RNA sequence: GGGAACGACUCGAGUAGAGUCGAAAAAGCCCCAUUGCCUAUCUGGUUUUUGUCACUACACUCACUAGUGAUUAUACGAUUACAGUCUUUGUUACUGUCAACCUUGCAAAAGUUUGCACUUAUGCCACAACUUCAGACUUCGGUCUGAAGAAAAGAAACAACAACAACAAC
Reactivity to DMS in 0.01 (KOAc 150mM, MgCl2 10mM, bicine 150mM(pH8.5), 24C), signal-to-noise 9, nucleotides 027 to 129: a150g040c090c010c010c080a130u060u070g000c000c010u060a070u060c140u070g020g040u020u030u020u040u000g010u030c000a040c030u030a040c140a140c110u070c120a140c190u020a000g010u030g030a040u010u000a060u030a070c090g040a010u030u060a030c020a050g020u030c050u070u090u000g000u060u050a040c000u020g030u030c120a030a070c060c000u050u060g040c060a030a060a080a050g040u020u010u030g020c100a060c100u050u030a050u000g000c030c060a060c120a010a110
Reactivity to 2A3 in 0.01 (KOAc 150mM, MgCl2 10mM, bicine 150mM(pH8.5), 24C), signal-to-noise 9, nucleotides 027 to 129: a000g040c010c010c010c000a080u080u120g040c010c010u120a140u170c090u120g120g000u070u050u010u090u150g020u010c000a010c020u030a020c060a030c080u150c030a070c050u050a010g010u000g030a010u050u080a060u020a060c080g020a060u080u090a020c010a010g010u000c050u060u260u240g120u190u080a020c010u010g020u020c020a030a040c010c010u040u060g030c010a010a040a030a060g040u060u070u100g030c020a030c010u110u060a040u160g050c030c020a060c010a120a070